RNA sequence: GGGAACGACUCGAGUAGAGUCGAAAAUGGUCACAGUUUAUAUCUAGCAGACAAUUUGACUGCUGAUGAAACAAAGGCGCUUAAAGAGUUAUAUGGCCCCGUUGAUCCUACUUUCUUACACAGAUUCGUUCUACAGUUUGUUCGCAAACUGUAGAACAAAAGAAACAACAACAACAAC
Reactivity to 2A3 in 0.01 (KOAc 150mM, MgCl2 10mM, bicine 150mM(pH8.5), 24C), signal-to-noise 1, nucleotides 027 to 126: u120g000g000u080c000a040c050a040g010u000u000u010a240u000a010u080c110u150a000g050c000a000g000a080c070a280a300u110u140u220g080a070c010u000g000c000u000g000a010u030g000a020a010a000c000a000a100a000g030g000c080g000c110u010u040a100a100a000g110a030g030u200u040a070u020a000u140g030g000c020c020c010c020g030u060u070g020a010u000c010c030u030a060c000u060u130u020c030u030u100a080c050a000c040a120g120a290u120u100c070
Reactivity to DMS in 0.01 (KOAc 150mM, MgCl2 10mM, bicine 150mM(pH8.5), 24C), signal-to-noise 2, nucleotides 027 to 126: u000g030g040u000c020a050c140a160g000u000u000u000a060u000a020u000c000u020a050g000c000a010g010a080c050a110a290u010u010u010g010a080c010u000g030c010u010g000a050u000g010a040a030a020c030a080a180a130g000g020c080g000c060u000u000a080a060a110g000a100g000u030u000a140u000a090u000g000g020c030c010c020c060g000u010u010g000a070u000c010c040u000a010c130u000u000u010c030u020u000a100c190a080c220a190g000a150u000u010c100
Structure probing data (2A3 and DMS) for a 177-nucleotide construct. Conditions: 150 mM KOAc, 10 mM MgCl2 and 150 mM bicine (pH 8.5), 24 C. DMS adducts were read by reverse transcription with MarathonRT.